Chemical mapping of a 177-nucleotide RNA with DMS and 2A3. 2A3 adducts were read by reverse transcription with SuperScript II with manganese.
[RMDB]
RNA sequence: GGGAACGACUCGAGUAGAGUCGAAAAUAGAAUUUUUCUAGGUAAGGGUGAAACGGUGCGGUAAGAGCGCACCAGCGAGGUAGGUGACUACCUCGGCUAGGUAAACCCCACUGGGAGCAAGGCAUUAUACUAAUUGGGUGUUCGCACCCAAUUAGUAAAAAGAAACAACAACAACAAC
Reactivity to DMS in 0.01 (KOAc 150mM, MgCl2 10mM, bicine 150mM(pH8.5), 24C), signal-to-noise 4, nucleotides 027 to 126: u020a080g010a060a100u020u010u030u010u010c010u000a050g020g000u040a170a150g000g010g010u000g000a110a080a120c090g000g000u000g010c000g010g000u020a060a120g020a270g000c010g000c010a000c000c000a010g000c010g000a010g000g010u000a010g000g000u040g030a210c000u000a000c000c000u010c000g020g010c030u000a040g010g010u020a050a190a050c050c000c010c080a100c060u010g000g020g010a050g020c160a060a090g000g010c110a050u020u020a120
Reactivity to 2A3 in 0.01 (KOAc 150mM, MgCl2 10mM, bicine 150mM(pH8.5), 24C), signal-to-noise 3, nucleotides 027 to 126: u130a010g080a030a010u080u020u010u030u040c030u010a040g010g040u130a080a160g050g000g010u070g130a090a040a050c040g010g000u000g000c010g030g000u040a100a000g030a000g050c010g010c000a010c000c000a010g000c000g030a000g000g000u020a000g020g110u110g060a060c000u000a000c010c000u000c000g000g000c010u020a030g050g000u070a070a040a040c000c000c010c000a030c010u020g000g010g010a020g010c040a030a040g090g000c040a030u080u040a050